[RMDB]
RNA sequence: GGGAACGACUCGAGUAGAGUCGAAAACGAUCAACAUUGCGCCUGACACCGAUCAGUUCCGUAAGGAUCUGAAGAGGGAUAUCGCAGAGAUCGAACGGACGACGAAGGCUUCCAUCGGCGUCAAGGCUGACUUGGACAACUUCCGUGAGGAAGUUGAAUGAAUGUGUGAAUUCGUUCACACAUUCAUAAAAGAAACAACAACAACAAC
Reactivity to 2A3 in 0.01 (KOAc 150mM, MgCl2 10mM, bicine 150mM(pH8.5), 24C), signal-to-noise 6, nucleotides 027 to 156: c020g020a070u110c040a030a140c030a130u080u200g010c030g020c020c020u030g010a020c020a030c060c000g020a030u040c040a020g010u060u020c010c000g020u060a040a080g050g000a010u000c010u040g060a170a080g060a110g060g110g020a040u090a040u120c030g000c040a010g010a000g000a140u040c010g000a040a020c030g040g060a010c030g010a010c040g060a120a030g090g030c070u090u010c040c020a030u010c000g020g000c010g010u030c050a050a050g040g000c020u050g030a110c040u030u060g030g020a020c010a010a000c010u010u000c000c010g030u080g050a050g010g000a000a010g010u010u010g010a000
Reactivity to DMS in 0.01 (KOAc 150mM, MgCl2 10mM, bicine 150mM(pH8.5), 24C), signal-to-noise 5, nucleotides 027 to 156: c030g010a060u000c040a140a130c090a190u000u000g050c030g020c050c030u000g000a160c090a160c020c010g000a210u000c030a070g010u000u000c010c010g040u010a150a210g010g010a030u000c010u000g030a050a100g010a240g010g030g010a140u000a090u010c030g010c020a120g010a140g020a060u000c020g000a150a110c070g000g000a070c010g010a080c030g000a080a120g000g030c100u000u000c040c030a300u000c000g010g010c020g020u000c030a040a090g010g000c020u000g010a090c130u010u000g000g000a130c000a010a010c000u000u000c000c000g010u000g000a300g020g000a030a010g010u000u000g000a040